[RMDB]
RNA sequence: GGGAACGACUCGAGUAGAGUCGAAAACAGAGCCUGGGCGGCAGGCCUCUCAGCCUGAGCAAGCUCGAGACAGGCCCUUCACCUAUCGCCAGUCCCAUUGUGUCAGGCAGUGCAGAGGAGCACCAGACAGAUAACAUGGCUUCGGCCAUGUUAUCUGAAAAGAAACAACAACAACAAC
Reactivity to 2A3 in 0.01 (KOAc 150mM, MgCl2 10mM, bicine 150mM(pH8.5), 24C), signal-to-noise 2, nucleotides 027 to 126: c020a010g110a000g150c000c010u020g030g040g000c070g100g060c010a040g020g150c000c000u010c000u000c010a020g000c010c020u050g020a020g010c030a060a020g010c010u090c120g000a020g010a010c030a010g000g040c000c070c000u180u210c090a220c070c050u120a120u270c060g000c000c000a000g020u030c000c010c000a030u030u110g010u030g140u080c000a000g010g020c030a040g040u040g070c070a010g020a010g120g040a010g050c010a040c040c000a010g050a070
Reactivity to DMS in 0.01 (KOAc 150mM, MgCl2 10mM, bicine 150mM(pH8.5), 24C), signal-to-noise 2, nucleotides 027 to 126: c080a140g000a140g020c060c020u000g010g030g010c070g030g030c080a050g010g030c020c010u000c010u000c020a110g000c010c000u010g010a180g010c050a040a070g000c110u000c140g010a030g000a030c070a060g000g000c010c120c040u000u000c110a110c140c120u010a050u000c110g010c020c020a130g030u010c010c010c000a130u000u010g030u000g010u000c000a030g020g050c020a100g010u000g010c100a060g000a040g010g060a200g000c040a100c000c060a050g000a160